[RMDB]
RNA sequence: GGGAACGACUCGAGUAGAGUCGAAAAGAUAUGGAUCAGAACUACUUCCCACUCAGGCAACAGCUCGGAAACGAGACAUGCCUGUUGGGAAGCUGAUCCUAAGUCAAAACGGAUGUUCGCAUCCGAACCUUACUUGAGGCUUCGGCCUCAAGUAAGGAAAAGAAACAACAACAACAAC
Reactivity to DMS in 0.01 (KOAc 150mM, MgCl2 10mM, bicine 150mM(pH8.5), 24C), signal-to-noise 2, nucleotides 027 to 126: g010a070u000a300u000g000g030a010u000c010a050g030a120a050c120u010a300c030u000u020c000c000c000a050c200u010c010a010g000g000c000a000a050c270a120g000c000u000c000g000g000a060a090a190c000g000a000g000a040c120a160u000g020c000c000u010g000u010u010g010g000g000a010a000g000c000u000g010a010u040c000c000u030a000a100g010u000c020a050a050a140a130c020g000g000a010u000g010u000u030c220g060c010a000u020c000c000g000a030a070
Reactivity to 2A3 in 0.01 (KOAc 150mM, MgCl2 10mM, bicine 150mM(pH8.5), 24C), signal-to-noise 1, nucleotides 027 to 126: g090a020u100a030u210g000g000a020u010c010a010g000a080a070c090u170a080c000u300u000c000c010c010a020c080u080c000a000g060g040c010a050a030c020a240g000c020u000c000g000g070a070a020a000c020g020a000g000a040c040a030u060g030c010c010u020g000u020u020g000g010g030a000a010g020c000u000g000a000u030c010c020u000a070a030g060u010c050a000a010a070a080c010g030g000a000u030g030u110u110c240g000c140a000u000c010c000g070a060a050
Structure probing data (DMS and 2A3) for a 177-nucleotide construct. The reactions ran in a buffer of 150 mM KOAc, 10 mM MgCl2 and 150 mM bicine (pH 8.5), at 24 C. For DMS, 923 sequencing reads were counted. For DMS the reverse transcriptase was MarathonRT. Reactivities are rounded to 0.1 and cut off at 0 and 3.